RNA sequence: GGGAACGACUCGAGUAGAGUCGAAAAACACACACACUAGGGUUCUUCUGAUAGAACCCAGCUCAACAUUCUGAUGUAAUUGUUGACAUAGAUCUUACAUCAGGAGAACUAUGUAAGUGUGUGAGAAGAUAGUAAUCACUUUCGAGUGGUUGCUAUCAAAAGAAACAACAACAACAAC
Reactivity to DMS in 0.01 (KOAc 150mM, MgCl2 10mM, bicine 150mM(pH8.5), 24C), signal-to-noise 9, nucleotides 027 to 126: a070c100a300c000a000c010a000c000a040c020u000a200g000g010g000u000u000c000u000u010c190u020g020a070u030a010g000a060a020c030c020c030a020g010c120u000c040a030a040c060a060u000u010c020u010g010a090u010g010u020a010a010u020u020g010u010u010g000a050c070a100u020a080g000a060u010c080u000u010a110c070a040u010c050a030g000g000a010g010a030a050c070u010a060u030g010u020a050a040g010u000g020u000g000u000g000a080g010a100a100
Reactivity to 2A3 in 0.01 (KOAc 150mM, MgCl2 10mM, bicine 150mM(pH8.5), 24C), signal-to-noise 9, nucleotides 027 to 126: a000c090a000c000a000c000a000c000a010c040u100a100g080g030g020u010u000c000u050u010c070u100g090a080u060a070g010a010a010c000c000c000a000g000c010u000c000a010a020c000a030u020u000c010u060g110a070u060g030u090a020a020u080u070g030u040u050g020a010c010a020u150a040g070a080u020c010u030u070a040c010a020u010c010a010g010g010a000g000a010a020c040u060a040u190g080u080a070a050g000u000g000u000g000u000g000a020g010a010a010